RNA sequence: GGGAACGACUCGAGUAGAGUCGAAAAUUGAUACCUGCUAAAACCCGGUGCAUUCAUCAAUGCAGGUUAAGCCAAAGGGAUGUCCCGACCGGAGGCCGACAAUCCAGGGAACCGGAUGUCAUCACGUAAAACCGUCAGUUCUUCGGAACUGACGGAACACAUUUGCGAUGUUCGCAUCGCAAAUGUGAAAAGAAACAACAACAACAAC
Reactivity to 2A3 in 0.01 (KOAc 150mM, MgCl2 10mM, bicine 150mM(pH8.5), 24C), signal-to-noise 1, nucleotides 027 to 156: u020u010g020a010u040a080c000c000u000g000c020u030a000a000a190a090c040c060c030g060g000u050g060c120a120u010u300c020a030u100c090a180a060u160g000c000a000g010g000u000u020a000a010g000c010c000a000a000a000g000g000g010a000u020g020u020c000c000c000g010a010c010c000g000g030a050g000g000c000c000g000a000c010a120a040u010c080c060a030g070g000g100a040a070c080c040g000g000a030u080g110u060c110a080u100c030a050c070g130u100a010a030a060a110c000c020g000u020c000a020g020u000u010c000u030u130c210g140g000a000a000c000u000g010a000c000g000g020a000a000
Source: RMDB library M2RFPK, as collected in RNAgym. The record gives the reactivity of an RNA of 207 nucleotides to 2A3. Reactivities are given for positions 27 through 156.